[RMDB]
RNA sequence: GGGAACGACUCGAGUAGAGUCGAAAAGGUCAGGCCUGAUCGGAAACAGCAGCAGGUGAGUCCGCCUUAUGUGAAGGAUCGGCUGAACCACGAGGAAAUACUGAGCCAACGCAAGACGGUAGCCGAAAAAAUCUAGUUCACUUCGGUGAACUAGAAACAUGUAUUUCGGGUUCGCCCGAAAUACAUGAAAAGAAACAACAACAACAAC
Reactivity to 2A3 in 0.01 (KOAc 150mM, MgCl2 10mM, bicine 150mM(pH8.5), 24C), signal-to-noise 3, nucleotides 027 to 156: g000g020u030c010a030g040g120c040c020u220g030a050u040c040g080g080a140a110a010c050a030g060c010a010g060c000a010g000g020u040g030a090g120u080c050c050g030c000c020u060u090a060u060g090u040g070a110a050g080g000a020u020c020g010g000c020u020g010a040a020c000c010a020c050g030a050g000g100a030a120a000u080a100c060u040g000a010g030c030c030a070a040c020g000c070a070a040g060a030c040g000g040u040a040g040c000c020g060a080a000a000a000a000a020u010c000u000a000g000u020u000c000a010c000u040u050c230g040g000u000g000a000a000c000u000a000g000a000a000a000
Reactivity to DMS in 0.01 (KOAc 150mM, MgCl2 10mM, bicine 150mM(pH8.5), 24C), signal-to-noise 2, nucleotides 027 to 156: g000g000u000c020a210g010g020c010c020u020g000a050u000c000g020g050a240a160a080c090a240g000c090a090g050c120a060g000g020u040g000a110g020u000c040c040g000c010c010u010u000a160u000g020u020g060a030a220g010g010a110u000c050g020g050c000u000g010a100a140c000c000a160c060g020a110g000g030a070a060a150u020a000c140u010g030a080g030c020c030a010a180c080g010c050a050a140g040a210c000g020g030u000a100g050c020c030g050a000a030a050a040a050a080u010c010u000a000g000u010u000c010a040c010u000u000c250g060g050u000g000a000a010c000u000a000g000a010a090a170

This 207-nucleotide RNA was probed chemically with 2A3 and DMS. The RNA was probed in 150 mM KOAc, 10 mM MgCl2 and 150 mM bicine (pH 8.5) at 24 C. The data come from the RNA Mapping Database (RMDB), library M2RFPK.